[RMDB]
RNA sequence: GGGAACGACUCGAGUAGAGUCGAAAAGCUGGGGCCGGUGUAUCAGGCCGGCACGUUGUCGGGUAACCCGGUGGCGGUUGCCGCCGGGCUGGCAACGCUGCGGGCCGCCGACGACGCGGUCUACACCCUAUCAAGGUUCUUUCGAGAACCUUGAUAGAAAAGAAACAACAACAACAAC
Reactivity to 2A3 in 0.01 (KOAc 150mM, MgCl2 10mM, bicine 150mM(pH8.5), 24C), signal-to-noise 3, nucleotides 027 to 126: g040c090u050g010g010g020g040c020c040g060g010u080g030u100a080u150c080a020g000g010c020c000g050g010c030a000c000g010u010u010g010u000c010g010g020g060u090a110a170c010c000c000g000g000u010g030g030c060g200g300u190u300g000c020c000g000c000c010g000g000g010c000u000g010g000c000a000a000c010g010c020u000g000c010g050g000g000c000c000g050c020c030g010a030c060g010a010c020g000c020g080g000u000c000u010a040c010a030c030c000
Reactivity to DMS in 0.01 (KOAc 150mM, MgCl2 10mM, bicine 150mM(pH8.5), 24C), signal-to-noise 4, nucleotides 027 to 126: g000c250u000g010g000g020g010c010c010g000g020u000g010u010a110u020c100a140g010g000c000c010g010g020c010a010c020g000u000u000g010u000c000g010g010g010u000a120a300c040c000c020g000g020u000g010g020c000g020g020u010u010g000c000c010g010c000c020g000g000g000c000u010g000g010c000a010a000c010g010c210u000g010c000g010g010g000c010c000g010c090c100g000a050c080g010a070c040g000c000g020g000u000c010u000a070c050a120c040c030
Chemical mapping of a 177-nucleotide RNA with 2A3 and DMS. Reactivities are given for positions 27 through 126. For 2A3 the reverse transcriptase was SuperScript II with manganese. The RNA was probed in 150 mM KOAc, 10 mM MgCl2 and 150 mM bicine (pH 8.5) at 24 C.